[RMDB]
The record gives the reactivity of an RNA of 177 nucleotides to 2A3 and DMS. The DMS profile rests on 5,707 reads. The RNA was probed in 150 mM KOAc, 10 mM MgCl2 and 150 mM bicine (pH 8.5) at 24 C. The 2A3 profile rests on 7,922 reads.
RNA sequence: GGGAACGACUCGAGUAGAGUCGAAAAACUCACGAUUUUGUCAGCAGCGUCACGCAAUAAUUUCUCCUGCUGAGCCCGGGCCGUCGGAUCCAUAUUAGAUGCAUCCUGCGUGUAGCGAGAUGCUAGCCCGGGUAUUUAAUUUCGAUUAAAUACCCGGAAAAGAAACAACAACAACAAC
Reactivity to 2A3 in 0.01 (KOAc 150mM, MgCl2 10mM, bicine 150mM(pH8.5), 24C), signal-to-noise 9, nucleotides 027 to 126: a000c030u060c040a060c060g100a100u060u070u110u220g100u090c030a010g000c010a010g030c040g060u050c030a010c060g040c030a050a080u150a170a110u060u110u040c040u010c010c010u020g030c010u040g030a020g010c000c000c000g010g040g000c020c000g040u030c030g040g010a030u030c030c010a030u050a130u190u190a120g080a110u110g010c010a010u000c000c020u040g010c020g030u170g120u130a030g010c000g010a110g000a060u040g000c010u010a030g000c000
Reactivity to DMS in 0.01 (KOAc 150mM, MgCl2 10mM, bicine 150mM(pH8.5), 24C), signal-to-noise 3, nucleotides 027 to 126: a110c020u000c040a070c130g010a140u010u010u000u010g010u010c040a050g010c020a020g020c160g030u020c060a060c110g010c040a050a060u030a100a090u010u020u010c010u000c030c000u000g040c020u000g010a080g010c040c030c030g010g000g000c020c040g010u000c060g010g000a050u020c050c030a080u010a090u030u020a060g020a090u010g010c060a000u010c000c000u020g000c030g030u040g000u030a140g020c010g030a080g000a020u010g010c030u000a060g010c130